[RMDB]
RNA sequence: GGGAACGACUCGAGUAGAGUCGAAAACAAGGGUAGUUCGCUACCCUUGAAAUUCUAGUCGCUAGAAAACGAUCAAAACUAGCGACUAGAAAAACGAACGAAAAACUCAAUUCUUCGGAAUUGAGAAUCACAUUAAGAUGUUCGCAUCUUAAUGUGAAAAAGAAACAACAACAACAAC
Reactivity to DMS in 0.01 (KOAc 150mM, MgCl2 10mM, bicine 150mM(pH8.5), 24C), signal-to-noise 3, nucleotides 027 to 126: c010a010a000g010g030g010u010a010g020u000u010c160g020c000u000a010c000c000c010u000u000g000a020a090a070u000u000c010u000a000g000u000c010g020c000u000a010g010a100a050a140a150c210g010a130u020c210a110a070a110a090c000u000a010g010c000g000a000c010u000a000g000a000a030a060a070a130c130g000a070a050c130g010a050a070a070a110a130c000u000c000a000a020u000u000c000u000u010c190g020g010a010a010u010u000g000a010g000a050a080
Reactivity to 2A3 in 0.01 (KOAc 150mM, MgCl2 10mM, bicine 150mM(pH8.5), 24C), signal-to-noise 3, nucleotides 027 to 126: c010a000a000g000g000g020u010a000g010u040u030c110g000c080u000a000c000c000c000u000u000g000a000a000a000u010u000c000u010a000g000u000c000g010c010u000a010g070a140a220a040a070c120g100a210u220c140a050a080a040a080c000u000a010g000c020g000a000c000u010a000g000a000a010a010a000a000c020g050a030a000c030g030a070a010a040a050a070c000u020c000a010a000u000u010c010u020u060c220g110g010a000a010u020u010g000a000g000a000a040